[RMDB]
Structure probing data (2A3 and DMS) for a 177-nucleotide construct.
For DMS the reverse transcriptase was MarathonRT.
For DMS, 19,768 sequencing reads were counted.
It was measured as part of the RMDB library TTRDES.
For 2A3, 48,467 sequencing reads were counted.
RNA sequence: GGGAACGACUCGAGUAGAGUCGAAAAGAUAUGGAUAAGGUGUACCAGCGAUGAGCUUACUCGGAAACGAGUAAGCGAGCUGACACUUAUCCUAAGUCAAAGCUACGUCAGUUCGCUGACGUAGCAACAGUACAGUAAUCUUCGGAUUACUGUACUGAAAAGAAACAACAACAACAAC
Reactivity to 2A3 in 0.01 (KOAc 150mM, MgCl2 10mM, bicine 150mM(pH8.5), 24C), signal-to-noise 9, nucleotides 027 to 126: g040a020u090a030u160g010g010a010u030a040a070g300g160u090g050u170a300c180c070a010g000c030g300a300u260g100a060g000c000u000u000a000c000u000c000g010g020a030a080a070c010g000a000g000u000a000a000g000c000g000a010g000c010u020g020a020c020a000c020u000u000a000u010c000c000u000a130a010g010u010c060a190a080a030g000c000u000a000c000g000u000c000a030g010u030u200c280g020c250u000g000a000c000g000u000a000g000c000a010a000
Reactivity to DMS in 0.01 (KOAc 150mM, MgCl2 10mM, bicine 150mM(pH8.5), 24C), signal-to-noise 9, nucleotides 027 to 126: g000a050u000a300u010g000g000a020u000a010a010g020g020u000g030u000a100c300c040a010g010c000g010a200u020g020a290g010c000u000u000a000c000u000c010g010g000a110a110a160c010g020a010g000u000a000a000g020c000g000a060g010c000u000g010a080c020a020c010u000u000a000u000c000c000u010a040a110g000u000c040a110a120a140g000c000u000a010c000g000u000c000a010g010u000u020c270g020c000u000g000a000c000g020u000a000g010c010a010a030